[RMDB]
RNA sequence: GGGAACGACUCGAGUAGAGUCGAAAAACAAGAAACUCAUUUGCCAUUCUAAAAUGCGUACACUCGCUAAAUGGGAUACGUGACAGUGGAGAUGGAUGGGUAUAUGUCAGUAUCAAAUGCCGAUGUGGAUCUGGGUUACAAGCUUUUUGGGCGUGGGCAUUUGUCCCCUAUUCGUAGGGGACAAAUGAAAAGAAACAACAACAACAAC
Reactivity to 2A3 in 0.01 (KOAc 150mM, MgCl2 10mM, bicine 150mM(pH8.5), 24C), signal-to-noise 4, nucleotides 027 to 156: a000c060a030a040g110a080a070a020c030u060c020a090u050u060u160g030c010c020a010u090u000c070u180a060a110a060a050u160g000c000g030u060a060c070a030c100u080c060g040c060u070a120a110a090u090g010g010g000a010u040a060c040g020u030g070a040c040a040g040u030g040g030a050g010a040u050g050g020a010u050g030g000g100u070a080u010a010u140g070u030c020a010g040u030a030u100c030a060a050a080u090g000c000c030g060a070u060g020u050g060g000a030u020c040u050g030g000g000u020u030a030c020a080a000g010c030u000u050u030u120u080g040g000g000c030g010u050g010g020g000
Reactivity to DMS in 0.01 (KOAc 150mM, MgCl2 10mM, bicine 150mM(pH8.5), 24C), signal-to-noise 2, nucleotides 027 to 156: a050c070a050a100g020a130a120a090c030u020c040a140u000u000u010g040c040c030a140u000u010c070u000a030a060a140a060u000g010c020g010u000a090c030a100c030u000c030g010c080u000a060a090a160u010g020g020g000a190u010a000c020g030u000g020a070c070a080g040u010g000g010a070g030a120u000g010g020a070u000g000g000g010u000a040u000a070u000g000u000c000a090g020u000a070u000c060a080a100a130u000g020c000c050g010a080u000g020u010g000g010a080u010c050u000g010g040g020u000u000a070c050a080a070g000c100u010u000u000u000u000g000g010g030c040g050u010g010g000g020